[RMDB]
RNA sequence: GGGAACGACUCGAGUAGAGUCGAAAACUCGAAAGAGACCUGCAUAUCUUAGGCAGAUGACCAAGUCUCGUCUGAAAAGCGAAAGCCCUAAGAUAUGCAGCUGUGAAGACUUGUCGCAGAAAAUAAACAUUAGGUCGUGAUUCGUCACGACCUAAUGAAAAGAAACAACAACAACAAC
Reactivity to 2A3 in 0.01 (KOAc 150mM, MgCl2 10mM, bicine 150mM(pH8.5), 24C), signal-to-noise 7, nucleotides 027 to 126: c000u010c000g020a010a040a000g070a010g030a050c010c000u000g000c000a000u000a000u000c000u000u010a000g000g000c000a000g000a010u010g000a010c020c020a010a000g020u000c000u000c010g060u000c000u020g110a240a200a120a020g030c030g060a070a020a020g010c000c000c000u000a000a000g000a000u000a000u000g000c000a000g010c000u000g000u000g010a050a030g010a010c000u010u010g000u010c000g000c010a000g140a040a080a020a030u300a030a100a010
Reactivity to DMS in 0.01 (KOAc 150mM, MgCl2 10mM, bicine 150mM(pH8.5), 24C), signal-to-noise 4, nucleotides 027 to 126: c000u000c010g000a070a110a080g010a030g020a130c300c000u000g030c010a000u000a010u000c000u000u000a000g000g020c030a030g000a010u000g010a040c300c010a030a020g000u000c030u000c000g020u000c000u010g010a190a080a100a180g000c000g020a130a110a140g030c000c020c000u000a040a020g000a010u010a010u000g010c010a000g000c010u000g000u000g000a030a090g000a010c020u000u000g000u000c020g000c020a010g000a190a070a050a090u060a090a060a220